[RMDB]
RNA sequence: GGGAACGACUCGAGUAGAGUCGAAAAUUGCACAGUGAACACCCAAGUGUGCUUUAUAGUUCCCUUGGCUUUGACCCUGUGCUAGAGCAUUGCCUGCUCUUCUCCUCUGCAUUAAAAGGAAUAUUUAGACUUGUGGACGUUUCGACGUCCACAAGUCAAAAGAAACAACAACAACAAC
Reactivity to 2A3 in 0.01 (KOAc 150mM, MgCl2 10mM, bicine 150mM(pH8.5), 24C), signal-to-noise 3, nucleotides 027 to 126: u160u040g000c000a000c000a020g010u030g140a110a020c000a010c010c000c010a000a000g010u010g020u030g000c090u040u190u070a300u080a050g000u010u000c040c000c000u010u020g080g000c050u120u200u240g060a060c000c000c000u010g010u000g000c000u000a020g000a000g010c020a000u100u280g080c000c010u040g000c040u010c000u020u030c020u000c010c030u020c030u090g070c080a080u050u260a100a050a000a000g080g020a090a050u100a170u210u080u060a040

Description
Chemical mapping of a 177-nucleotide RNA with 2A3. The 2A3 profile rests on 1,151 reads. 2A3 is a SHAPE reagent: it acylates the 2'-hydroxyl of flexible nucleotides of all four kinds.